[RMDB]
RNA sequence: GGGAACGACUCGAGUAGAGUCGAAAAGAGCACCAGAACAACCUGACAGAGAUGAAGGCUGAGGGCACUGUAGUCAUGAAGCUGGCACAGAAAGAGCACCGCAUACAGGAGAGUGUGCUGCGCAAGGACAUGCGGGCACUGAAGGUGGAGCUCAAGAGGGCAUGCUAAUAUUCGUAUUAGCAUGCCCAAAAGAAACAACAACAACAAC
Reactivity to 2A3 in 0.01 (KOAc 150mM, MgCl2 10mM, bicine 150mM(pH8.5), 24C), signal-to-noise 2, nucleotides 027 to 156: g050a000g050c060a040c030c010a000g060a110a080c080a080a010c050c030u090g000a070c030a020g080a030g040a040u070g050a060a050g050g000c020u010g030a120g000g050g000c020a010c020u060g010u150a100g010u030c010a060u060g050a020a000g010c040u040g000g000c010a020c010a030g080a050a050a000g040a020g040c020a030c010c010g030c000a040u050a140c020a070g000g070a050g030a040g070u080g000u000g000c010u240g110c000g000c000a010a080g060g000a010c000a020u010g020c000g000g000g060c030a000c000u030g040a020a040g110g000u050g000g030a010g000c000u070c050a040a010g210a100